RNA sequence: GGGAACGACUCGAGUAGAGUCGAAAAGACGUACGGACGGUGUUUGCGUGAGUGCCAGCAAACCUACACUUGCGGUUGCCAAUCUCAGAUUUACGACCUAGGCGGCUAGGUCAGCGUGGUGGUAACAUACCCUAAGUCUGUUCGCAGACUUAGGGUAAAAAGAAACAACAACAACAAC
Reactivity to DMS in 0.01 (KOAc 150mM, MgCl2 10mM, bicine 150mM(pH8.5), 24C), signal-to-noise 4, nucleotides 027 to 126: g020a080c080g010u000a030c030g000g000a060c070g000g000u020g000u000u000u020g000c040g010u020g020a080g010u000g000c090c060a100g020c050a020a070a080c080c020u000a110c110a090c060u020u000g010c100g010g010u010u010g000c020c020a040a050u010c010u000c050a100g010a120u000u020u030a130c160g000a010c010c000u010a010g000g030c220g020g000c000u010a020g000g010u010c000a050g000c070g010u010g020g010u000g010g010u010a030a050c100a180
Reactivity to 2A3 in 0.01 (KOAc 150mM, MgCl2 10mM, bicine 150mM(pH8.5), 24C), signal-to-noise 5, nucleotides 027 to 126: g040a010c040g030u070a000c020g020g060a030c040g030g040u050g020u030u060u090g020c030g000u080g080a100g020u090g080c040c000a010g000c030a010a040a100c000c020u080a070c060a040c030u040u050g010c030g120g000u010u020g000c000c010a070a090u050c030u000c030a060g010a120u080u110u150a110c140g000a010c000c010u030a040g010g140c040g070g050c100u000a000g000g000u000c000a000g010c000g030u050g000g000u010g000g000u030a010a000c010a050